[RMDB]
RNA sequence: GGGAACGACUCGAGUAGAGUCGAAAAGUGUGCUUAACCAGAUUGACACCACGAGACAUAGAAAAACUCAGGGGAGUAAGAGUUCGUGUUAAGCGAACUAAUAUGGCAAAUUUCUAUAACGACCAGAAAUUUUAUCCCCUUUCGAGGGGAUAAAAUUAAAAGAAACAACAACAACAAC
Reactivity to DMS in 0.01 (KOAc 150mM, MgCl2 10mM, bicine 150mM(pH8.5), 24C), signal-to-noise 2, nucleotides 027 to 126: g010u000g010u020g010c020u000u000a030a160c010c030a120g000a090u000u010g010a140c060a090c010c030a070c050g030a090g010a050c090a080u010a100g000a030a100a060a090a060c020u000c050a070g000g000g010g000a070g010u000a050a110g000a050g020u000u000c010g010u020g010u040u030a080a100g000c010g000a000a000c010u000a020a060u030a090u020g010g010c070a040a040a110u020u000u000c030u020a090u000a070a080c160g000a140c040c050a070g000a080
Reactivity to 2A3 in 0.01 (KOAc 150mM, MgCl2 10mM, bicine 150mM(pH8.5), 24C), signal-to-noise 3, nucleotides 027 to 126: g050u090g020u020g050c000u030u080a080a030c020c020a060g050a270u100u050g030a030c000a010c040c010a030c040g040a040g020a060c050a060u190a060g180a110a130a040a030a010c010u010c080a080g000g050g080g000a070g050u030a050a060g020a010g180u030u020c020g000u020g030u180u210a150a010g010c010g000a010a000c000u000a010a070u070a050u160g020g000c000a000a160a120u020u050u000c020u070a070u080a210a000c010g030a020c030c010a010g090a020
This 177-nucleotide RNA was probed chemically with DMS and 2A3. For 2A3, 1,314 sequencing reads were counted. The reactions ran in a buffer of 150 mM KOAc, 10 mM MgCl2 and 150 mM bicine (pH 8.5), at 24 C.